[RMDB]
RNA sequence: GGGAACGACUCGAGUAGAGUCGAAAAGAUAUGGAAUCUCAGGUGACAUGCUACUGGGUCGGAAACGACCCUGUAGCAACAGCACCGAGAUUCCUAAGUCAAAGUCGUGUGCUUCGGCACACGACAACAUACAAUCACCCUUCGGGGUGAUUGUAUGAAAAGAAACAACAACAACAAC
Reactivity to 2A3 in 0.01 (KOAc 150mM, MgCl2 10mM, bicine 150mM(pH8.5), 24C), signal-to-noise 3, nucleotides 027 to 126: g000a000u020a020u050g010g010a000a010u010c040u040c190a240g050g000u020g030a080c100a300u300g020c010u000a000c020u030g000g000g000u000c000g020g010a000a010a010c020g000a000c000c030c000u000g010u000a000g000c000a000a010c010a010g010c000a000c010c000g010a000g000a010u000u020c000c010u000a000a000g000u000c040a200a110a030g000u010c000g000u020g000u000g000c010u040u120c300g170g000c000a000c000a000c000g010a000c000a000a000
Reactivity to DMS in 0.01 (KOAc 150mM, MgCl2 10mM, bicine 150mM(pH8.5), 24C), signal-to-noise 3, nucleotides 027 to 126: g000a020u000a070u010g000g000a040a000u000c000u000c010a130g050g020u010g000a050c160a120u010g020c000u000a000c000u000g000g000g020u010c000g010g000a020a020a040c000g000a010c010c000c000u010g000u000a000g010c000a030a010c190a140g010c000a010c000c000g000a000g000a010u000u000c010c000u000a000a060g000u000c000a160a130a140g010u000c000g020u000g020u000g010c000u000u010c240g040g010c000a010c000a000c000g000a000c000a020a110
The record gives the reactivity of an RNA of 177 nucleotides to 2A3 and DMS. Conditions: 150 mM KOAc, 10 mM MgCl2 and 150 mM bicine (pH 8.5), 24 C. In probing experiments dimethyl sulfate is read out at A N1 and C N3, which are open when not base-paired. Reactivities are given for positions 27 through 126. For DMS, 5,722 sequencing reads were counted. It was measured as part of the RMDB library TTRDES.